This 177-nucleotide RNA was probed chemically with 2A3 and DMS. Conditions: 150 mM KOAc, 10 mM MgCl2 and 150 mM bicine (pH 8.5), 24 C. For 2A3, 1,940 sequencing reads were counted.
[RMDB]
RNA sequence: GGGAACGACUCGAGUAGAGUCGAAAAAGCUAUGCGGACUACGGUCCGCAUAGCAGACGGGGUGCUCGCAAUCUUUCUCCAUUAGGAUUCUUACCCUUUCCUAAUCUGAUCGUGAGCACCUUAAAAACAGACCGUUUUUAUUCGUAAAAACGGUCUGAAAAGAAACAACAACAACAAC
Reactivity to 2A3 in 0.01 (KOAc 150mM, MgCl2 10mM, bicine 150mM(pH8.5), 24C), signal-to-noise 3, nucleotides 027 to 126: a000g000c030u000a000u020g010c000g000g000a010c010u030a040c300g120g000u000c000c010g000c000a000u000a000g000c000a000g010a020c060g010g010g000g010u000g000c000u000c020g050c000a020a000u000c030u040u230u130c170u050c080c040a020u010u000a000g000g010a020u070u030c040u100u140a120c030c010c000u020u020u000c000c000u010a010a020u040c070u060g000a020u020c040g000u000g010a000g010c010a010c000c010u000u030a060a070a000a000a000
Reactivity to DMS in 0.01 (KOAc 150mM, MgCl2 10mM, bicine 150mM(pH8.5), 24C), signal-to-noise 2, nucleotides 027 to 126: a110g010c000u010a010u000g000c010g020g000a020c000u020a060c260g100g030u000c000c000g040c010a000u000a010g040c010a000g020a050c210g010g000g000g000u000g000c000u000c000g000c000a020a030u030c020u040u000u000c110u040c220c290a090u030u000a020g000g000a020u020u000c050u000u080a180c230c170c250u000u000u000c000c000u010a040a010u020c130u000g000a010u000c090g030u000g000a000g030c010a000c000c010u000u000a020a010a110a130a060